The record gives the reactivity of an RNA of 207 nucleotides to 2A3 and DMS. Conditions: 150 mM KOAc, 10 mM MgCl2 and 150 mM bicine (pH 8.5), 24 C. For DMS the reverse transcriptase was MarathonRT. Values cover nucleotides 27 to 156.
RNA sequence: GGGAACGACUCGAGUAGAGUCGAAAAGGAGCGAGAAGUAUUUAGCUUGAGAUAGCUAAAUCACCUCGGUAUGAUUAGGGUGAGACCUAGGAACCGUAGGGGUAUUCUCAAAGGAAGCUUUUGCAGUGAAGGAAGAUACGAUUCGUCGUAUCUUCAACCCUUAGUACUUCUUCGGAAGUACUAAGGGAAAAGAAACAACAACAACAAC
Reactivity to 2A3 in 0.01 (KOAc 150mM, MgCl2 10mM, bicine 150mM(pH8.5), 24C), signal-to-noise 4, nucleotides 027 to 156: g060g010a050g040c040g010a020g000a080a030g010u140a010u000u010u000a000g000c000u020u010g020a020g020a100u140a030g010c000u000a000a000a010u020c010a030c000c000u020c020g010g020u210a170u120g050a070u060u060a030g000g030g000u060g090a070g050a060c000c010u020a020g010g020a020a000c020c010g020u080a030g000g010g000g000u010a090u110u070c050u000c000a030a050a010g060g020a070a040g000c030u080u070u150u170g050c070a060g030u050g130a120a020g100g000a000a000g000a000u000a000c010g010a010u000u070c110g060u000c000g000u100a000u000c000u000u000c000a000a010
Reactivity to DMS in 0.01 (KOAc 150mM, MgCl2 10mM, bicine 150mM(pH8.5), 24C), signal-to-noise 3, nucleotides 027 to 156: g030g000a080g020c070g000a040g020a050a060g010u010a070u000u000u010a020g020c000u000u000g000a270g010a160u000a020g000c000u000a000a040a020u000c050a070c010c000u000c000g010g040u000a060u000g010a210u000u000a040g010g010g000u000g020a300g010a150c000c020u000a030g010g000a110a050c010c000g020u000a040g010g000g010g030u010a040u000u010c010u000c030a070a070a140g020g010a080a140g000c030u000u020u000u000g010c040a120g020u000g010a110a180g000g000a050a010g000a020u000a000c000g010a100u000u020c300g050u000c010g000u000a010u000c000u010u000c010a030a140